[RMDB]
Structure probing data (2A3) for a 207-nucleotide construct. Reactivities are given for positions 27 through 156. For 2A3 the reverse transcriptase was SuperScript II with manganese. Conditions: 150 mM KOAc, 10 mM MgCl2 and 150 mM bicine (pH 8.5), 24 C. The 2A3 profile rests on 1,074 reads.
RNA sequence: GGGAACGACUCGAGUAGAGUCGAAAAGUACACGAUCGAACACGAACGAGUACGUUCACGUGAUCGAACGUACGUGAGAACGUUCACGAGUUCGAUCGUUCGUGAUCACGAGAACGAACUCACACACACGAACGUGUGUACGUACGAACGUGAGUGAUCUCCUGAGCAGGUUCGCCUGCUCAGGAGAAAAAGAAACAACAACAACAAC
Reactivity to 2A3 in 0.01 (KOAc 150mM, MgCl2 10mM, bicine 150mM(pH8.5), 24C), signal-to-noise 2, nucleotides 027 to 156: g140u090a010c000a000c000g000a060u020c000g020a100a050c020a000c120g050a090a020c070g000a020g000u040a050c000g000u000u000c030a020c000g010u000g000a010u020c030g110a150a050c020g000u010a000c000g010u000g000a060g000a010a030c070g090u260u180c190a060c280g160a060g000u000u000c000g000a040u010c000g000u010u010c000g010u020g000a010u050c030a030c020g000a010g010a010a000c020g010a030a000c000u000c000a000c000a000c010a000c000a000c040g230a300a030c170g010u000g000u000g010u070a060c020g020u020a010c010g010a010a000c010g000u000g010a110g060u160g080a060